[RMDB]
RNA sequence: GGGAACGACUCGAGUAGAGUCGAAAAUUCCUUUCUUCUACCCACUGUUCGAGGAUCUCCUCCCUCUCCUUCGAGGACGGGUUCGCGACGGGUUGGCUCAUCCUGAGAUCGGGGAGCCUCGACGAUCGUCACAAUACAACUUCGGUUGUAUUGUGACAAAAGAAACAACAACAACAAC
Reactivity to DMS in 0.01 (KOAc 150mM, MgCl2 10mM, bicine 150mM(pH8.5), 24C), signal-to-noise 1, nucleotides 027 to 126: u030u000c000c010u000u000u000c030u000u000c060u000a110c030c010c020a120c270u000g000u010u020c010g020a040g010g020a090u000c060u000c000c030u000c030c020c040u000c020u000c040c300u000u000c220g020a060g000g010a020c060g010g000g020u020u000c050g000c080g010a140c220g010g000g030u010u010g000g030c020u000c010a120u000c020c000u000g000a040g000a020u000c110g000g000g010g000a010g000c000c000u000c000g000a010c050g000a020u000c110
Reactivity to 2A3 in 0.01 (KOAc 150mM, MgCl2 10mM, bicine 150mM(pH8.5), 24C), signal-to-noise 1, nucleotides 027 to 126: u010u020c030c000u010u070u060c030u050u020c030u070a050c020c000c000a060c050u130g050u160u010c000g010a010g000g070a140u090c000u030c020c000u060c020c010c000u050c020u030c040c030u170u180c110g050a020g030g020a020c040g020g010g000u040u140c000g000c030g090a090c050g140g020g090u020u060g030g000c000u010c010a070u050c030c030u050g010a020g020a050u040c050g020g040g060g020a010g040c000c000u000c000g020a000c000g010a060u060c050
Structure probing data (DMS and 2A3) for a 177-nucleotide construct.